This 177-nucleotide RNA was probed chemically with DMS.
Conditions: 150 mM KOAc, 10 mM MgCl2 and 150 mM bicine (pH 8.5), 24 C.
DMS (dimethyl sulfate) methylates the pairing face of unpaired adenines and cytosines.
For DMS the reverse transcriptase was MarathonRT.
Source: RMDB library OK2TRN, as collected in RNAgym.

RNA sequence: GGGAACGACUCGAGUAGAGUCGAAAACGGCGCGACGCGUGGCCCGGCGCGCCGCGCUCGAACGGAUACGCGCCGAGACGGCGCACGUCGGCGAGCAGCGAAUCGGGCGAUUUGUACGUGACGGUCAUCGUGCCAUAGGUUUCGACCUAUGGCACGAAAAAGAAACAACAACAACAAC
Reactivity to DMS in 0.01 (KOAc 150mM, MgCl2 10mM, bicine 150mM(pH8.5), 24C), signal-to-noise 1, nucleotides 027 to 126: c010g000g000c020g000c010g010a010c020g000c190g040u000g000g020c000c000c000g020g030c300g000c040g000c000c020g030c190g010c000u000c010g010a030a110c110g050g000a030u000a170c110g000c000g000c010c000g010a110g000a120c150g020g000c000g000c000a040c080g030u000c040g030g010c020g000a040g010c020a090g000c110g010a050a010u010c050g040g010g000c010g010a110u000u000u000g000u000a060c120g000u000g010a100c080g000g000u000c090a120